[RMDB]
RNA sequence: GGGAACGACUCGAGUAGAGUCGAAAAGCGGGGCUUGAAACGCGGGCAGCGCGCACGCCCGGCGAAGAAGUUCGCAUACGCGGUGUGCUGGUGCCGAAGUGUCUGCUGCAACGGCACGCUCGACACCUAGAACAUACCGUAUUCGUACGGUAUGUAACAAUAUGGUGGGUUUCGACCCACCAUAUUGAAAAGAAACAACAACAACAAC
Reactivity to 2A3 in 0.01 (KOAc 150mM, MgCl2 10mM, bicine 150mM(pH8.5), 24C), signal-to-noise 7, nucleotides 027 to 156: g010c030g020g060g040g000c030u090u120g080a080a090a020c080g000c040g040g030g010c030a040g030c030g010c010g000c040a010c010g010c000c000c000g020g000c020g000a010a010g070a070a020g130u030u010c010g000c030a040u070a220c070g020c120g030g000u010g000u010g030c040u060g020g070u020g010c010c030g020a090a040g030u060g040u060c050u070g060c050u080g030c040a070a030c020g000g010c000a010c030g020c030u020c020g020a010c010a020c030c010u030a050g050a120a000c000a000u000a000c000c000g000u000a010u000u100c210g040u010a000c000g000g000u000a000u000g000u010a030a020
Reactivity to DMS in 0.01 (KOAc 150mM, MgCl2 10mM, bicine 150mM(pH8.5), 24C), signal-to-noise 4, nucleotides 027 to 156: g020c030g010g000g030g030c040u000u010g010a090a090a080c040g020c020g000g010g020c050a150g020c030g020c080g020c010a050c060g000c000c010c050g060g030c020g020a060a090g010a230a170g010u000u000c010g030c010a130u000a260c020g010c090g050g010u010g010u000g030c020u010g010g030u000g010c000c020g000a050a160g020u010g000u010c050u010g020c040u020g030c070a180a200c100g000g000c020a020c000g000c030u000c020g020a120c030a070c010c010u010a140g000a140a050c010a000u000a030c000c010g020u000a030u000u000c260g030u000a010c020g010g000u010a000u000g000u010a050a130
Description: Source: RMDB library M2RFOK, as collected in RNAgym. This 207-nucleotide RNA was probed chemically with 2A3 and DMS. 2A3 adducts were read by reverse transcription with SuperScript II with manganese. The RNA was probed in 150 mM KOAc, 10 mM MgCl2 and 150 mM bicine (pH 8.5) at 24 C. As a SHAPE reagent, 2A3 marks flexible, mostly unpaired nucleotides at the ribose 2'-OH.